[RMDB]
RNA sequence: GGGAACGACUCGAGUAGAGUCGAAAAAAUCGGGGAAGAUAAGCUAGCAGCAAAAAGGAACCGAUUCCCACCAAGUUCGGAAAGAGAUACCGGGCGAUGCGCUGAAGAAAGAAUCUCGCUUCAGACAUACAGCCGUGUCGCUUCGGCGACACGGCAACCGUAUGAGCAAGUUCGCUUGCUCAUACGGAAAAGAAACAACAACAACAAC
Reactivity to 2A3 in 0.01 (KOAc 150mM, MgCl2 10mM, bicine 150mM(pH8.5), 24C), signal-to-noise 1, nucleotides 027 to 156: a010a010u060c040g000g030g000g020a000a000g050a290u080a160a040g040c070u190a070g040c100a030g060c030a120a000a060a060a070g160g030a060a000c000c000g000a000u010u000c050c000c000a010c010c030a110a070g000u020u070c020g000g100a110a080a000g230a150g020a030u070a070c000c000g000g000g020c020g070a040u020g050c180g020c050u010g000a000a000g020a010a300a010g030a100a100u070c180u060c120g000c000u000u010c020a010g010a040c010a000u200a050c080a020g000c010c000g000u000g000u000c000g020c000u050u020c140g140g000c030g070a000c000a000c000g100g030c000a000a000

The record gives the reactivity of an RNA of 207 nucleotides to 2A3. Conditions: 150 mM KOAc, 10 mM MgCl2 and 150 mM bicine (pH 8.5), 24 C. The data come from the RNA Mapping Database (RMDB), library M2RFPK.